RNA sequence: GGGAACGACUCGAGUAGAGUCGAAAAUUUUGGGCAGAUAACAACUGUUACGCGUCUUGCCACUGUAUUGUAAACACUACAACAAAUUUUAAGUUUAAUACACCUACGCGACAAGAUGUAUCGGAAAGCAUUAUUGGUUAUUCGUAACCAAUAAUGCAAAAGAAACAACAACAACAAC
Reactivity to DMS in 0.01 (KOAc 150mM, MgCl2 10mM, bicine 150mM(pH8.5), 24C), signal-to-noise 6, nucleotides 027 to 126: u000u000u010u010g010g010g010c010a040g010a080u000a070a090c180a110a100c040u000g000u010u010a090c100g010c040g020u000c020u000u000g000c010c010a080c070u010g000u000a020u000u000g010u000a040a040a060c100a040c070u000a040c100a050a110c170a040a070a150u010u010u000u010a060a090g000u000u000u000a050a070u010a050c040a030c170c100u000a050c080g000c020g000a030c020a030a020g000a030u010g000u000a050u000c080g010g010a090a080a080
Reactivity to 2A3 in 0.01 (KOAc 150mM, MgCl2 10mM, bicine 150mM(pH8.5), 24C), signal-to-noise 7, nucleotides 027 to 126: u110u110u070u090g040g030g000c000a010g020a040u080a130a040c040a040a050c040u030g020u060u080a060c080g000c000g010u020c020u020u040g000c000c000a040c040u070g010u030a040u040u050g090u050a020a030a000c030a020c090u120a040c040a170a020c040a070a210a110u130u200u120u210a110a040g000u000u030u050a060a040u030a010c010a010c020c010u050a040c070g000c030g040a050c010a010a010g030a030u060g020u020a080u100c030g040g040a090a040a010
The data come from the RNA Mapping Database (RMDB), library M2PK90. An RNA of 177 nucleotides, treated with DMS and 2A3 and read out base by base. For DMS, 6,589 sequencing reads were counted. For DMS the reverse transcriptase was MarathonRT. Values cover nucleotides 27 to 126.